[RMDB]
RNA sequence: GGGAACGACUCGAGUAGAGUCGAAAAUGGGAAUCCCUGGUUGCCCCUCGUGUCCAGCCCCUCCCCGCGUCGGUGGAAGGGGGACUCCGGGAUCCCUUGCAUGCUGGGGACGAAGCCGCCUCCGGGCGUAUAAAAUGAAGUUCGCUUCAUUUUAUACAAAAGAAACAACAACAACAAC
Reactivity to 2A3 in 0.01 (KOAc 150mM, MgCl2 10mM, bicine 150mM(pH8.5), 24C), signal-to-noise 2, nucleotides 027 to 126: u100g000g000g020a110a110u030c050c000c020u060g070g090u180u150g140c010c000c000c000u020c040g110u090g170u060c020c020a070g050c130c010c000c020u050c010c000c010c010g050c050g130u190c070g070g130u180g020g040a050a040g010g000g000g000g000a030c000u010c040c000g010g000g000a010u000c000c000c000u020u100g060c050a040u120g010c010u030g020g000g020g030a020c010g060a090a030g100c040c030g020c040c000u000c020c040g020g030g010c020
Reactivity to DMS in 0.01 (KOAc 150mM, MgCl2 10mM, bicine 150mM(pH8.5), 24C), signal-to-noise 4, nucleotides 027 to 126: u010g010g000g000a090a070u000c010c010c000u010g040g000u010u000g010c020c010c010c020u000c030g030u010g010u000c010c010a100g010c050c010c020c020u010c010c020c010c040g010c220g010u010c130g010g020u010g010g010a070a090g010g010g000g010g000a020c010u010c020c030g000g000g010a080u000c010c010c010u010u000g000c120a070u000g020c030u010g010g000g020g000a050c030g000a100a140g000c080c020g020c030c010u000c040c030g020g000g020c100

The data come from the RNA Mapping Database (RMDB), library VIROID. Chemical mapping of a 177-nucleotide RNA with 2A3 and DMS. For DMS the reverse transcriptase was MarathonRT.